Chemical mapping of a 177-nucleotide RNA with DMS. The RNA was probed in 150 mM KOAc, 10 mM MgCl2 and 150 mM bicine (pH 8.5) at 24 C. It was measured as part of the RMDB library RFMREP.
RNA sequence: GGGAACGACUCGAGUAGAGUCGAAAACGCGGUAAUUCCAGCUCCAAUAGCGUAUAUUAAAGUUGUUGCAGUUAAAAAGCUCGUAGUUGAACCUUGGGCCUGGCUGGCCGGUCCGCCUAACCGCGUGCCAUCAGAACUAGUUCGCUAGUUCUGAUGGAAAAGAAACAACAACAACAAC
Reactivity to DMS in 0.01 (KOAc 150mM, MgCl2 10mM, bicine 150mM(pH8.5), 24C), signal-to-noise 1, nucleotides 027 to 126: c010g010c010g010g020u000a070a200u020u020c020c010a090g030c040u010c050c010a060a020u010a070g020c030g010u010a120u000a140u010u020a020a090a120g000u000u010g010u000u000g010c100a090g000u010u010a020a070a210a160a130g000c040u010c020g000u000a050g030u000u000g000a040a170c140c010u000u000g000g030g020c070c010u010g020g000c090u000g020g020c130c100g020g010u000c080c030g000c090c050u000a200a100c060c020g000c000g040u020g000